[RMDB]
The record gives the reactivity of an RNA of 177 nucleotides to DMS and 2A3. The RNA was probed in 150 mM KOAc, 10 mM MgCl2 and 150 mM bicine (pH 8.5) at 24 C. For 2A3 the reverse transcriptase was SuperScript II with manganese. DMS adducts were read by reverse transcription with MarathonRT. It was measured as part of the RMDB library OK1LIB.
RNA sequence: GGGAACGACUCGAGUAGAGUCGAAAAUAGGAUCAUAUUCAAUAGUUUAUUACAGUUGGAAGAUUCAAUAUUGAGUGGAAGUAGACCAACUGGACCAUCUGCUGUGGCUAGUAUGGGUGACAUGAAACCGUAUCAACUCGUUCGCGAGUUGAUACGGAAAAGAAACAACAACAACAAC
Reactivity to DMS in 0.01 (KOAc 150mM, MgCl2 10mM, bicine 150mM(pH8.5), 24C), signal-to-noise 2, nucleotides 027 to 126: u000a150g000g010a050u000c060a040u000a240u040u000c040a030a100u050a140g010u000u030u030a140u040u090a030c040a170g060u030u000g000g000a070a010g000a040u000u000c000a160a040u000a030u030u040g060a130g010u000g000g030a060a070g060u050a080g050a160c000c000a040a010c040u050g000g020a230c000c000a000u040c060u080g040c230u000g000u000g010g000c050u000a010g010u000a070u000g010g010g000u030g010a130c150a080u010g000a050a020a040
Reactivity to 2A3 in 0.01 (KOAc 150mM, MgCl2 10mM, bicine 150mM(pH8.5), 24C), signal-to-noise 2, nucleotides 027 to 126: u180a000g100g060a110u150c060a050u050a120u100u090c110a090a100u050a060g120u050u170u160a240u070u120a200c030a030g010u020u000g040g010a010a040g060a210u040u100c190a100a000u160a270u080u180g030a020g090u030g080g000a160a020g000u010a020g110a040c000c000a000a000c050u000g010g030a120c010c000a030u050c020u130g030c000u010g000u010g110g000c060u030a030g000u030a110u020g010g010g010u060g000a000c000a090u250g050a030a070a110